[RMDB]
RNA sequence: GGGAACGACUCGAGUAGAGUCGAAAAUCUGGAAUUAACCUUUGCCAAUGUAUAGGGUAGGGUACUAAUUGUUUUUCAUAUGGGUAGCUAAUUGUCUGCACCAUUGAUUAAGGUGCUAUUCUUUUCCCACUGAUCUGAAAUGCUACCCUUACUAUAAUCACCUCAUAAUGUUCGCAUUAUGAGGUGAAAAAGAAACAACAACAACAAC
Reactivity to DMS in 0.01 (KOAc 150mM, MgCl2 10mM, bicine 150mM(pH8.5), 24C), signal-to-noise 2, nucleotides 027 to 156: u000c080u000g020g050a100a100u000u000a070a080c020c000u000u000u010g050c030c060a070a130u010g030u010a140u000a090g020g010g030u000a050g030g040g010u010a090c090u000a100a070u000u000g020u000u000u000u000u000c050a150u000a060u000g010g010g010u000a030g030c020u000a070a170u000u000g010u000c070u000g000c000a030c020c000a160u000u000g000a230u010u000a060a070g010g010u010g020c010u000a030u000u000c110u000u000u000u000c000c000c020a110c070u000g020a080u010c050u000g010a090a040a100u010g010c020u000a010c000c000c010u000u000a010c060u000a090u000a070a220
Reactivity to 2A3 in 0.01 (KOAc 150mM, MgCl2 10mM, bicine 150mM(pH8.5), 24C), signal-to-noise 3, nucleotides 027 to 156: u100c080u050g060g080a050a050u080u040a070a150c020c010u110u180u210g050c030c020a140a110u170g070u230a130u240a300g060g000g050u020a010g010g000g020u090a090c070u120a050a110u060u000g070u050u020u000u050u080c050a070u090a080u140g010g000g000u000a000g000c010u070a120a090u220u120g080u110c110u070g000c000a020c000c000a000u010u140g100a070u150u060a140a040g000g000u000g010c010u010a070u090u080c000u030u050u010u010c010c010c000a060c100u060g020a070u070c040u070g020a000a030a040u070g000c000u000a000c010c000c000u010u010a000c000u000a010u070a090a050